[RMDB]
RNA sequence: GGGAACGACUCGAGUAGAGUCGAAAAAGGAGAAGAUAUUAGCAUAUUAGACCUUAAAGAAGAUUCUCUUCAAGGGGAUAGUGAAGUAGUUGAAAUUUUAUCUAGGAUGGGAAUGGAAAUAUUAAGAGCUAAAUAGGUACUUCGGUACCUAUUUAGCAAAAGAAACAACAACAACAAC
Reactivity to 2A3 in 0.01 (KOAc 150mM, MgCl2 10mM, bicine 150mM(pH8.5), 24C), signal-to-noise 4, nucleotides 027 to 126: a000g150g010a080g000a140a010g080a020u080a060u200u110a050g030c020a020u030a060u120u080a070g040a090c010c000u090u090a060a100a030g030a020a020g070a090u280u000c060u020c000u030u060c030a050a050g000g000g000g030a020u110a050g090u050g080a130a010g050u160a000g070u030u070g060a040a000a090u130u170u080u030a030u030c040u030a030g080g040a090u100g060g000g000a040a020u060g070g110a040a100a000u170a050u140u240a090a070g060a010
Reactivity to DMS in 0.01 (KOAc 150mM, MgCl2 10mM, bicine 150mM(pH8.5), 24C), signal-to-noise 3, nucleotides 027 to 126: a070g010g000a080g000a210a100g000a010u010a060u000u030a100g020c080a140u010a060u000u000a100g000a150c060c020u000u050a030a080a100g000a050a070g000a170u010u030c080u030c020u010u010c060a090a090g000g000g000g000a080u000a030g020u000g020a030a090g010u010a030g010u010u010g010a060a040a090u010u020u000u020a040u040c050u010a120g000g010a080u000g010g000g000a030a060u010g030g000a040a010a060u040a050u010u010a080a060g000a140

Chemical mapping of a 177-nucleotide RNA with 2A3 and DMS. For 2A3 the reverse transcriptase was SuperScript II with manganese. DMS adducts were read by reverse transcription with MarathonRT. It was measured as part of the RMDB library OK1LIB. The 2A3 profile rests on 1,433 reads. Reactivities are rounded to 0.1 and cut off at 0 and 3.